[RMDB]
RNA sequence: GGGAACGACUCGAGUAGAGUCGAAAAGUCUUCGAGCAGAUCUUCAAGAACGCUCGCUUCGCCCAGGGCGGCAAUGCCCUGUUCGAGGGACGCCUGCGUGGCAACCCGAAGCCAUUCGUGACCUGGAAAUACCUCCAUGCUUCGGCAUGGAGGUAUUAAAAGAAACAACAACAACAAC
Reactivity to DMS in 0.01 (KOAc 150mM, MgCl2 10mM, bicine 150mM(pH8.5), 24C), signal-to-noise 2, nucleotides 027 to 126: g000u010c040u000u000c000g000a070g040c000a060g000a040u000c040u000u020c180a090a150g000a080a120c190g010c040u000c010g000c080u000u010c040g020c150c120c010a010g000g000g010c000g040g020c280a100a070u000g000c030c020c010u010g020u000u000c060g020a090g000g010g000a060c170g000c060c050u020g010c130g030u000g010g000c010a110a140c060c020c000g010a080a120g010c020c040a100u000u000c100g010u000g000a100c060c020u020g020g000a170
Chemical mapping of a 177-nucleotide RNA with DMS. The RNA was probed in 150 mM KOAc, 10 mM MgCl2 and 150 mM bicine (pH 8.5) at 24 C.